Background:
Conditions: 150 mM KOAc, 10 mM MgCl2 and 150 mM bicine (pH 8.5), 24 C. This 177-nucleotide RNA was probed chemically with DMS. The data come from the RNA Mapping Database (RMDB), library TTRDEL. Values cover nucleotides 27 to 126.

RNA sequence: GGGAACGACUCGAGUAGAGUCGAAAAGAUAUGGAAUACAGCUUGGACCAUGACGGUCGGAAACGACCGCAUGCUAGCUGUUCCUAAGUCAAACGACGCUAUCCCUCUUCGGAGGGAUAGCGUCGAACCACUCAUGUAGGUUCGCCUACAUGAGUGGAAAAGAAACAACAACAACAAC
Reactivity to DMS in 0.01 (KOAc 150mM, MgCl2 10mM, bicine 150mM(pH8.5), 24C), signal-to-noise 1, nucleotides 027 to 126: g010a080u010a300u000g000g000a040a070u030a100c010a000g010c010u020u030g030g010a090c300c030a000u000g000a150c000g010g000u000c000g020g000a120a130a230c010g010a000c000c000g030c000a000u000g000c050u000a000g000c000u000g000u000u000c000c000u000a050a100g010u010c050a030a090a160c010g020a010c000g100c030u000a000u000c010c000c000u010c000u010u020c160g000g000a030g000g000g000a010u010a010g010c000g000u000c000g040a000a030